[RMDB]
RNA sequence: GGGAACGACUCGAGUAGAGUCGAAAAUUGAGGCGGAUAAGUUGCUAAGGCCGGACUUCCCUUCUUCUUCGGGAGCCUGAGCGAUAAACUUAUGCUUGCAAGGGGAACUUCGAGGCUAGUUAGCUAAGACUGCCGGCACAUUCGUGUGCUGGCGGUUAAAAGAAACAACAACAACAAC
Reactivity to 2A3 in 0.01 (KOAc 150mM, MgCl2 10mM, bicine 150mM(pH8.5), 24C), signal-to-noise 9, nucleotides 027 to 126: u160u150g050a050g020g040c040g020g020a040u040a110a050g040u070u060g040c040u060a060a070g060g000c010c000g010g010a020c010u070u080c010c020c000u030u060c030u040u010c000u050u080c070g030g000g010a010g000c000c030u040g010a040g010c050g070a100u170a140a060a010c010u030u030a020u100g040c020u040u090g080c020a040a050g020g010g000g010a030a040c020u070u040c070g020a040g010g010c000u020a030g140u120u080a010g010c020u030a070a020
Reactivity to DMS in 0.01 (KOAc 150mM, MgCl2 10mM, bicine 150mM(pH8.5), 24C), signal-to-noise 9, nucleotides 027 to 126: u030u020g000a080g010g010c040g010g000a060u010a030a060g000u010u010g000c040u010a080a070g010g010c010c030g010g010a100c180u010u000c010c010c020u000u010c060u010u010c060u010u010c130g010g000g000a070g010c030c030u000g000a040g010c020g000a140u040a070a080a150c030u000u000a030u010g010c020u000u010g010c050a050a040g000g000g000g010a060a060c120u020u010c060g010a130g000g000c020u000a110g000u010u020a070g010c020u010a070a240